Source: RMDB library RFM100, as collected in RNAgym. Chemical mapping of a 177-nucleotide RNA with 2A3. The 2A3 profile rests on 449 reads. Reactivities are given for positions 27 through 126. For 2A3 the reverse transcriptase was SuperScript II with manganese. The reactions ran in a buffer of 150 mM KOAc, 10 mM MgCl2 and 150 mM bicine (pH 8.5), at 24 C.
[RMDB]
RNA sequence: GGGAACGACUCGAGUAGAGUCGAAAAAGACGUGGAUUUAUCGCACAGUGGAAGAGCACAAACCAUUGGUUUGGGUCUCGCAUCCGUUAAUUGGUCCUUGAAAACCGGAUUAUGGUAUUUAGUCCUUAAUUCUGGAUCCGUUCGCGGAUCCAGAAUUAAAAGAAACAACAACAACAAC
Reactivity to 2A3 in 0.01 (KOAc 150mM, MgCl2 10mM, bicine 150mM(pH8.5), 24C), signal-to-noise 1, nucleotides 027 to 126: a000g100a000c040g120u040g000g010a000u080u090u090a170u110c210g000c030a230c140a050g120u130g050g030a300a000g000a010g030c000a000c000a030a010a010c000c080a300u000u300g000g030u010u010u010g100g000g050u020c030u000c000g000c000a000u050c050c000g010u100u030a050a050u010u090g080g000u090c010c000u060u000g220a140a000a000a000c010c000g000g000a040u030u040a050u270g040g000u000a090u010u080u060a010g000u030c000c000u000u000